[RMDB]
RNA sequence: GGGAACGACUCGAGUAGAGUCGAAAAGGGAAGUGAUGGGUCUUGCCAUGGAUCUCGCCGAUCUCCUCCACUGUCAGCGCUUCUUCAAGGAGACCGCCGAGCGGAACCCCACCGAGACCGAGAUCCGAUGCAGCUUUCAAUUCGUUGAAAGCUGCAUAAAAGAAACAACAACAACAAC
Reactivity to DMS in 0.01 (KOAc 150mM, MgCl2 10mM, bicine 150mM(pH8.5), 24C), signal-to-noise 1, nucleotides 027 to 126: g020g020g000a060a050g010u000g000a070u000g000g000g000u000c050u000u020g000c090c090a080u000g010g010a050u000c010u000c010g010c160c050g000a100u000c020u010c010c050u000c040c020a070c050u000g000u020c040a070g000c070g010c040u000u010c080u000u010c090a080a120g000g000a050g040a110c300c030g000c110c030g000a040g000c060g030g010a070a140c020c030c000c030a160c130c100g010a070g000a090c130c020g000a010g000a010u010c030c050g000